RNA sequence: GGGAACGACUCGAGUAGAGUCGAAAAAAUGCGUUUACCUAAGCGCUGAUACAAUGCUGCCAGAACAAUUUUAAAGCCAAGAACAGUUUAGUUUAGAGUAGUUUAUAAACUGAUCUACACGUGGCCUAAUAAUGCUGACUUUCGAGUCAGCAUUAUUAAAAGAAACAACAACAACAAC
Reactivity to 2A3 in 0.01 (KOAc 150mM, MgCl2 10mM, bicine 150mM(pH8.5), 24C), signal-to-noise 4, nucleotides 027 to 126: a000a000u150g000c030g010u030u000u110a200c040c040u100a020a030g000c000g000c030u020g020a020u050a170c070a030a050u120g030c030u060g000c010c000a040g040a110a060c050a090a030u060u050u130u210a190a050a010g000c000c010a000a040g020a040a060c000a000g000u050u040u040a040g010u000u070u050a110g030a050g040u100a040g060u090u050u070a170u070a000a000a000c000u010g040a080u030c000u020a020c100a030c120g120u040g020g030c000c010u020
Reactivity to DMS in 0.01 (KOAc 150mM, MgCl2 10mM, bicine 150mM(pH8.5), 24C), signal-to-noise 5, nucleotides 027 to 126: a060a050u020g000c030g020u000u000u000a130c090c080u000a080a140g000c020g000c010u000g010a130u030a080c150a070a050u010g000c040u000g000c010c030a080g010a090a060c190a050a030u010u010u020u030a050a100a150g020c040c020a070a030g010a030a070c070a030g000u000u000u000a020g010u000u000u010a060g010a140g010u000a100g020u020u000u010a080u000a020a000a020c010u000g000a050u000c000u000a080c200a100c190g020u000g010g020c010c050u020
About this RNA:
This 177-nucleotide RNA was probed chemically with 2A3 and DMS. Source: RMDB libraries RFM100 and RFMREP, as collected in RNAgym. As a SHAPE reagent, 2A3 marks flexible, mostly unpaired nucleotides at the ribose 2'-OH. DMS adducts were read by reverse transcription with MarathonRT. Conditions: 150 mM KOAc, 10 mM MgCl2 and 150 mM bicine (pH 8.5), 24 C.